[RMDB]
RNA sequence: GGGAACGACUCGAGUAGAGUCGAAAAGUAUCAAUGGCCUGUGACAGUCCGGUUGUACGAGUUUGGUCGGACUUGACGAAGCGCAGUACUACGCGAUUAUGUAAGAGGUACCUUUUCACUACGUUCAACCCAAUAAGUGCUUCGGCACUUAUUGGGUAAAAGAAACAACAACAACAAC
Reactivity to 2A3 in 0.01 (KOAc 150mM, MgCl2 10mM, bicine 150mM(pH8.5), 24C), signal-to-noise 2, nucleotides 027 to 126: g030u050a030u200c100a120a060u120g090g010c020c000u040g040u040g120a030c030a000g050u030c020c020g010g060u050u030g070u040a040c060g010a070g040u000u100u160g050g010u000c000g070g050a170c010u020u120g000a000c010g040a020a020g010c030g070c070a010g000u010a020c020u010a020c040g060c040g100a080u080u030a080u190g090u050a040a070g050a050g110g060u060a060c000c030u030u070u040u030c050a060c100u160a080c070g060u060u040c020a060
Reactivity to DMS in 0.01 (KOAc 150mM, MgCl2 10mM, bicine 150mM(pH8.5), 24C), signal-to-noise 2, nucleotides 027 to 126: g020u000a130u000c080a100a160u010g010g000c040c010u000g010u000g010a110c070a060g000u000c000c030g000g010u000u000g010u020a040c070g010a100g030u000u020u000g020g020u000c010g000g010a110c130u010u000g030a060c100g000a060a090g000c020g000c120a130g010u010a040c040u020a070c020g020c020g020a050u000u000a110u010g000u000a100a100g010a110g000g010u000a060c050c030u000u000u000u000c050a080c160u000a130c100g010u000u000c040a090